RNA sequence: GGGAACGACUCGAGUAGAGUCGAAAAUUGAGCAAGGAAUGCAAAAUAUUGAUCGUUAAUUGGCACGGAAUGAGCGCUAAACCAUCCAUCGCCCAAGCCAGACAACGCGCCCAAUGAUAUCCAAGUCAGAAAGCUGGUCCUUGGGGACGACCAUGUCUCGUGAGUAUGAUUUCGAUCAUACUCACGAAAAAGAAACAACAACAACAAC
Reactivity to 2A3 in 0.01 (KOAc 150mM, MgCl2 10mM, bicine 150mM(pH8.5), 24C), signal-to-noise 5, nucleotides 027 to 156: u030u050g020a010g010c020a030a060g030g050a100a070u050g010c040a030a050a100a050u230a100u070u160g060a070u090c040g020u040u040a060a050u150u070g000g000c030a010c050g040g040a040a070u090g010a040g020c040g010c100u110a100a040a060c020c020a040u070c030c010a040u070c050g030c000c010c000a030a010g020c010c010a020g010a060c070a050a060c050g020c020g040c030c030c000a060a070u090g020a040u010a010u060c040c030a040a040g050u050c030a040g110a100a110a010g040c050u020g010g010u030c000c000u020u020g000g000g030g020a010c020g000a000c000c050a030u110g040u020c000
Reactivity to DMS in 0.01 (KOAc 150mM, MgCl2 10mM, bicine 150mM(pH8.5), 24C), signal-to-noise 2, nucleotides 027 to 156: u000u010g000a080g020c010a090a110g010g030a060a060u010g040c060a050a060a090a120u000a170u000u020g010a100u000c000g020u010u010a030a100u000u000g000g040c010a070c000g000g000a110a100u000g010a090g030c020g030c070u000a080a060a080c040c000a100u000c020c020a070u000c030g020c060c040c020a040a100g010c020c040a060g000a110c030a080a070c150g000c000g030c030c020c040a040a050u010g000a100u000a100u000c070c060a030a190g020u000c050a110g010a070a080a110g020c010u000g030g030u000c050c030u000u010g030g070g040g000a050c100g000a070c010c030a090u000g000u010c060
Annotation: Chemical mapping of a 207-nucleotide RNA with 2A3 and DMS. The RNA was probed in 150 mM KOAc, 10 mM MgCl2 and 150 mM bicine (pH 8.5) at 24 C. 2A3 is a SHAPE reagent: it acylates the 2'-hydroxyl of flexible nucleotides of all four kinds. DMS adducts were read by reverse transcription with MarathonRT. The 2A3 profile rests on 3,738 reads. Values are in units of 0.01, from 0 to 300, in steps of 10. It was measured as part of the RMDB library OK3TST. For 2A3 the reverse transcriptase was SuperScript II with manganese.